This 177-nucleotide RNA was probed chemically with 2A3 and DMS. The 2A3 profile rests on 71,592 reads. High DMS reactivity at an A or C suggests that its Watson-Crick edge is free. For DMS the reverse transcriptase was MarathonRT. Values cover nucleotides 27 to 126. The reactions ran in a buffer of 150 mM KOAc, 10 mM MgCl2 and 150 mM bicine (pH 8.5), at 24 C.
[RMDB]
RNA sequence: GGGAACGACUCGAGUAGAGUCGAAAACGAGGAUCUCAUCGGCGAUAGCACAUUACAGGAUCUCAUAUUUGUAAUGUGAUAAGAUGGUAGUAUGAGAUCCUUACCAUCUUAUCGAUCGUGAGGUCAGGCUACUCGUACAUUUCGAUGUAUGAGUAGCAAAAGAAACAACAACAACAAC
Reactivity to 2A3 in 0.01 (KOAc 150mM, MgCl2 10mM, bicine 150mM(pH8.5), 24C), signal-to-noise 9, nucleotides 027 to 126: c040g010a030g070g010a000u010c000u000c000a020u060c020g020g010c010g010a010u020a020g030c000a000c000a000u010u020a010c010a010g050g050a090u030c070u040c130a110u140a120u130u080u020g020u010a000a010u010g010u020g020a040u040a040a030g020a010u020g020g010u010a020g010u040a080u230g180a100g010a050u010c000c000u000u010a000c000c000a010u000c000u030u070a040u040c040g080a160u030c000g020u010g010a010g000g010u000c010a000g070
Reactivity to DMS in 0.01 (KOAc 150mM, MgCl2 10mM, bicine 150mM(pH8.5), 24C), signal-to-noise 6, nucleotides 027 to 126: c080g000a020g000g000a000u000c000u000c000a000u000c010g000g000c010g000a010u000a000g010c000a000c020a020u000u000a010c030a030g000g000a040u010c120u030c170a080u040a090u020u020u010g000u000a020a010u010g010u000g000a100u020a040a040g010a010u000g000g010u000a030g010u030a120u020g010a080g000a110u010c100c020u010u000a000c010c010a030u010c010u000u000a020u010c020g000a040u030c040g040u000g000a030g000g010u000c010a140g020